[RMDB]
RNA sequence: GGGAACGACUCGAGUAGAGUCGAAAAGAUGCUGCGCACGCUGAUUAAAGUCACGUUCGGUUAUCCUGCGAUUUUUGACGAGGUUCGGCAGGAAUGCCAAAUCAACAAUGCGCAUGUUGUCGCCGGAGUCAACUUAAGAGUUCGCUCUUAAGUUGACAAAAGAAACAACAACAACAAC
Reactivity to DMS in 0.01 (KOAc 150mM, MgCl2 10mM, bicine 150mM(pH8.5), 24C), signal-to-noise 2, nucleotides 027 to 126: g010a060u010g030c040u010g010c050g020c070a050c130g020c080u000g000a050u000u010a070a110a160g000u000c100a100c140g000u000u000c150g020g040u000u000a140u000c010c010u010g000c000g000a020u000u010u010u020u000g020a060c140g000a080g020g030u010u010c120g000g020c000a010g010g030a040a220u000g000c010c010a050a050a020u010c010a010a020c060a100a140u000g010c020g010c010a040u010g000u000u000g020u000c100g000c000c020g000g010a300
Reactivity to 2A3 in 0.01 (KOAc 150mM, MgCl2 10mM, bicine 150mM(pH8.5), 24C), signal-to-noise 1, nucleotides 027 to 126: g030a010u070g060c020u000g020c010g000c010a010c060g000c050u000g020a020u040u290a130a120a000g030u060c060a040c120g010u110u080c090g000g000u030u090a060u070c000c010u050g030c010g040a090u150u000u010u110u160g070a070c090g020a060g090g000u050u040c030g070g040c000a000g050g000a010a040u000g000c000c040a000a000a010u010c000a030a030c030a030a070u110g020c000g020c010a000u100g000u010u090g020u030c000g000c130c000g000g030a010

Description
Chemical mapping of a 177-nucleotide RNA with DMS and 2A3. The DMS profile rests on 1,708 reads. DMS adducts were read by reverse transcription with MarathonRT.